RNA sequence: GGGAACGACUCGAGUAGAGUCGAAAAGAAAGAAAAGAAAAGAAAAGCCAAGACCAUCGGAGGAGACCGCACUUCGGCAACAGCUGAGGUCUAAGUCCUGUAUAUGAUAGGAAAAACAGCUGCAAAACCAUACCUAGGCGUUCGCGCCUAGGUAUGGAAAAGAAACAACAACAACAAC
Reactivity to 2A3 in 0.01 (KOAc 150mM, MgCl2 10mM, bicine 150mM(pH8.5), 24C), signal-to-noise 2, nucleotides 027 to 126: g020a020a030a000g080a010a120a010a000g060a050a060a000a000g120a020a110a040a000g010c000c000a030a030g060a120c000c010a030u010c070g030g020a010g030g020a040g040a030c040c000g000c030a010c000u000u050c030g060g000c020a120a000c000a110g070c020u030g030a000g030g030u000c010u050a010a140g010u050c000c000u010g090u050a080u030a000u150g260a110u080a090g080g010a090a010a060a000a000c000a000g000c010u080g020c000a000a080a010a000
Reactivity to DMS in 0.01 (KOAc 150mM, MgCl2 10mM, bicine 150mM(pH8.5), 24C), signal-to-noise 1, nucleotides 027 to 126: g000a010a200a120g080a030a040a020a050g080a120a090a000a160g000a080a020a070a040g010c000c020a020a040g000a110c010c000a060u000c100g000g000a040g050g000a070g000a110c180c050g000c140a090c030u000u010c020g000g000c060a040a130c130a060g060c000u040g000a090g000g000u000c050u000a110a110g000u000c000c050u010g000u080a060u050a070u000g000a140u030a020g000g000a010a050a020a050a010c090a070g000c020u000g010c120a040a050a190a300
Record summary: Conditions: 150 mM KOAc, 10 mM MgCl2 and 150 mM bicine (pH 8.5), 24 C. An RNA of 177 nucleotides, treated with 2A3 and DMS and read out base by base. For 2A3 the reverse transcriptase was SuperScript II with manganese. For DMS the reverse transcriptase was MarathonRT. It was measured as part of the RMDB library OK1LIB.